[RMDB]
RNA sequence: GGGAACGACUCGAGUAGAGUCGAAAAGGUCUGCAUGUGUUUAUUAUUCUCAAGUCUUGUGUAAAUCAAUUCUUUUGGUUGACUCAAGUUUGGUUACUUCUGUUGGUGAUUCUAGUGAAAUCGCCACUCCCAAGAAGCUUCGGCUUCUUGAAAAGAAACAACAACAACAAC
Reactivity to 2A3 in 0.01 (KOAc 150mM, MgCl2 10mM, bicine 150mM(pH8.5), 24C), signal-to-noise 9, nucleotides 027 to 129: g020g010u050c040u040g040c020a040u090g040u010g080u120u060u020a050u110u070a120u190u080c110u010c050a070a070g130u040c020u030u070g000u000g030u050a000a020a020u010c010a010a030u170u200c100u140u200u040u030g020g000u030u010g010a030c010u000c020a000a000g000u020u050u050g050g010u050u100a080c020u100u120c040u120g120u140u030g030g000u010g000a010u000u020c020u040a080g100u080g300a050a020a010u000c010g000c000c000a000c010u030c010c010
Reactivity to DMS in 0.01 (KOAc 150mM, MgCl2 10mM, bicine 150mM(pH8.5), 24C), signal-to-noise 4, nucleotides 027 to 129: g030g040u020c030u050g030c030a070u030g020u030g010u030u040u000a110u050u030a110u000u000c060u030c040a000a000g030u050c050u030u020g030u020g020u010a080a040a050u000c060a030a020u020u080c180u040u060u010u000g000g000u000u000g030a080c060u010c020a070a030g020u040u040u050g030g010u020u050a100c040u030u060c060u020g040u000u050g020g000u050g000a040u050u020c000u030a090g030u040g030a110a020a000u010c020g060c010c020a040c000u040c070c050

Chemical mapping of a 170-nucleotide RNA with 2A3 and DMS. The RNA was probed in 150 mM KOAc, 10 mM MgCl2 and 150 mM bicine (pH 8.5) at 24 C. The 2A3 profile rests on 12,733 reads.